[RMDB]
RNA sequence: GGGAACGACUCGAGUAGAGUCGAAAAGAUAUGGAUAUAUCGUCAUACCAACAUCGAUCUCGGAAACGAGGGAGUUGAUGACGAGUAUAUCCUAAGUCAAAGCCGUCUGGCUUCGGCCAGACGGCAAUCAUGUAAAGGUCUUCGGACCUUUACAUGAAAAAGAAACAACAACAACAAC
Reactivity to 2A3 in 0.01 (KOAc 150mM, MgCl2 10mM, bicine 150mM(pH8.5), 24C), signal-to-noise 2, nucleotides 027 to 126: g040a020u070a030u140g000g000a010u000a000u000a010u070c000g030u020c000a030u080a290c140c020a010a030c010a160u300c040g120a100u050c000u000c010g080g020a080a070a060c010g000a010g000g000g020a100g000u000u020g040a060u060g000a000c010g010a020g120u030a000u000a000u030c000c010u020a130a010g060u050c020a070a100a010g000c010c020g000u000c010u000g000g080c050u040u120c260g110g000c010c030a000g000a000c000g000g030c000a000a000
Reactivity to DMS in 0.01 (KOAc 150mM, MgCl2 10mM, bicine 150mM(pH8.5), 24C), signal-to-noise 4, nucleotides 027 to 126: g000a030u010a300u010g010g010a010u000a000u000a020u000c000g000u000c000a040u010a130c300c020a020a040c000a190u000c170g000a080u010c000u000c000g000g000a090a060a190c010g000a030g010g000g010a040g020u000u010g010a030u000g000a010c010g000a030g000u000a000u000a000u000c000c010u000a020a070g000u000c030a090a090a150g010c000c000g000u000c000u010g000g000c000u000u010c160g010g000c000c000a010g000a010c000g000g020c010a000a000
The record gives the reactivity of an RNA of 177 nucleotides to 2A3 and DMS. The reactions ran in a buffer of 150 mM KOAc, 10 mM MgCl2 and 150 mM bicine (pH 8.5), at 24 C. 2A3 adducts were read by reverse transcription with SuperScript II with manganese. For DMS the reverse transcriptase was MarathonRT. In probing experiments dimethyl sulfate is read out at A N1 and C N3, which are open when not base-paired.